[RMDB]
RNA sequence: GGGAACGACUCGAGUAGAGUCGAAAAUGUUUGCCCUUCGGGGCAAACAAUAGAAGCGUCACGAGCAAACGGCAAGCUCGGAAAAGGACGCAAUUGCGGAAAAUACCCUAUGUUUCGACAUAGGGAAUUACUUCCUAACGUUCGCGUUAGGAAGUAAAAAAGAAACAACAACAACAAC
Reactivity to DMS in 0.01 (KOAc 150mM, MgCl2 10mM, bicine 150mM(pH8.5), 24C), signal-to-noise 2, nucleotides 027 to 126: u000g010u000u010u000g030c000c000c000u000u000c230g030g000g010g000c000a000a000a000c000a040a140u000a090g010a130a140g020c000g000u000c000a130c010g000a000g030c010a050a100a130c140g020g010c130a080a130g000c010u000c010g020g000a070a070a120a160g000g000a020c010g010c010a040a030u000u000g010c090g030g000a110a050a060a070u020a150c000c000c000u000a000u010g020u000u000u010c150g000a010c000a000u000a010g030g030g010a020a010
Reactivity to 2A3 in 0.01 (KOAc 150mM, MgCl2 10mM, bicine 150mM(pH8.5), 24C), signal-to-noise 1, nucleotides 027 to 126: u020g000u000u000u010g000c030c000c000u000u000c180g000g000g000g010c000a000a000a000c000a000a000u140a010g060a170a060g000c000g000u010c010a010c140g010a000g000c030a090a090a050c120g130g030c050a100a000g000c030u030c000g020g000a060a120a020a030g140g010a000c000g000c000a020a080u230u140g070c050g100g020a030a020a020a130u120a080c000c000c010u010a020u040g010u000u090u050c150g020a010c000a020u000a010g000g070g000a000a000
Chemical mapping of a 177-nucleotide RNA with DMS and 2A3. 2A3 adducts were read by reverse transcription with SuperScript II with manganese. The reactions ran in a buffer of 150 mM KOAc, 10 mM MgCl2 and 150 mM bicine (pH 8.5), at 24 C. The data come from the RNA Mapping Database (RMDB), library M2PK50. The 2A3 profile rests on 1,166 reads.